[RMDB]
RNA sequence: GGGAACGACUCGAGUAGAGUCGAAAAAUUCCGGUUGAUCCUGCCGGAGGUCAUUGCUAGUGGAGUCCGAUUUAGCCAUGCUAGUUGCACGAGUUUAGACUCGUAGCAGAUAGCUCAGUAACACGUGCUCGUUUUACAUCUUCGGAUGUAAAACGAGAAAAGAAACAACAACAACAAC
Reactivity to DMS in 0.01 (KOAc 150mM, MgCl2 10mM, bicine 150mM(pH8.5), 24C), signal-to-noise 1, nucleotides 027 to 126: a160u000u000c000c000g000g000u000u010g000a120u010c040c010u000g000c000c010g000g020a050g010g010u020c110a060u000u000g000c020u000a040g020u000g000g010a130g020u010c050c040g020a090u010u010u010a080g030c050c090a090u000g000c020u000a010g000u010u000g010c030a040c020g000a010g010u000u000u010a220g030a050c000u000c000g040u000a110g000c000a020g020a050u000a010g020c000u000c260a080g010u020a030a030c100a050c180g010u000g020
Reactivity to 2A3 in 0.01 (KOAc 150mM, MgCl2 10mM, bicine 150mM(pH8.5), 24C), signal-to-noise 1, nucleotides 027 to 126: a000u050u000c020c000g000g020u030u090g050a110u070c020c040u070g020c010c000g010g000a030g030g010u110c050a060u060u150g020c030u030a030g010u020g110g000a030g020u010c020c030g050a070u120u030u120a010g020c010c020a050u090g000c000u010a030g050u050u000g000c030a000c030g010a000g030u060u160u100a170g060a130c010u010c000g020u030a110g020c010a010g010a080u010a020g010c000u000c080a030g030u040a070a010c050a010c120g100u120g050
The record gives the reactivity of an RNA of 177 nucleotides to DMS and 2A3. Source: RMDB library RFMREP, as collected in RNAgym. The reactions ran in a buffer of 150 mM KOAc, 10 mM MgCl2 and 150 mM bicine (pH 8.5), at 24 C.